RNA sequence: GGGAACGACUCGAGUAGAGUCGAAAACUGCUGGCACCGGACGCGCAGCGAUCUUUUAUUCGCGAUGGGCUGACGCUUCCUGUCGAUGUGAUCGCUAAUCCGCAGAUUUUCAGCGUCAAAACCGUCAAAUACCUUUUAGCUUCGGCUAAAAGGUAUUAAAAGAAACAACAACAACAAC
Reactivity to 2A3 in 0.01 (KOAc 150mM, MgCl2 10mM, bicine 150mM(pH8.5), 24C), signal-to-noise 4, nucleotides 027 to 126: c000u030g030c020u080g020g010c040a050c070c060g060g050a050c050g010c020g020c080a020g000c000g010a010u010c020u050u300u100u150a200u130u220c080g030c010g070a020u030g010g030g010c020u030g020a020c000g020c050u060u020c000c000u030g010u030c010g020a050u060g050u070g100a020u030c010g000c020u040a050a080u020c020c000g010c020a020g020a070u070u030u060u100c030a000g000c020g000u000c000a060a000a040a110c040c030g050u090c060a010
Reactivity to DMS in 0.01 (KOAc 150mM, MgCl2 10mM, bicine 150mM(pH8.5), 24C), signal-to-noise 6, nucleotides 027 to 126: c050u000g000c020u010g020g020c120a090c120c080g010g010a080c100g020c090g030c250a040g010c010g000a000u000c010u000u010u010u010a140u020u010c120g010c040g010a040u000g010g000g000c100u000g000a030c040g010c020u010u010c040c010u000g020u010c100g010a070u000g010u010g000a030u000c010g010c020u000a100a080u000c040c040g020c030a060g010a160u000u000u000u000c080a040g010c000g010u000c030a070a030a080a130c080c050g010u000c150a070

Conditions: 150 mM KOAc, 10 mM MgCl2 and 150 mM bicine (pH 8.5), 24 C. Structure probing data (2A3 and DMS) for a 177-nucleotide construct. Values cover nucleotides 27 to 126. For 2A3, 5,000 sequencing reads were counted.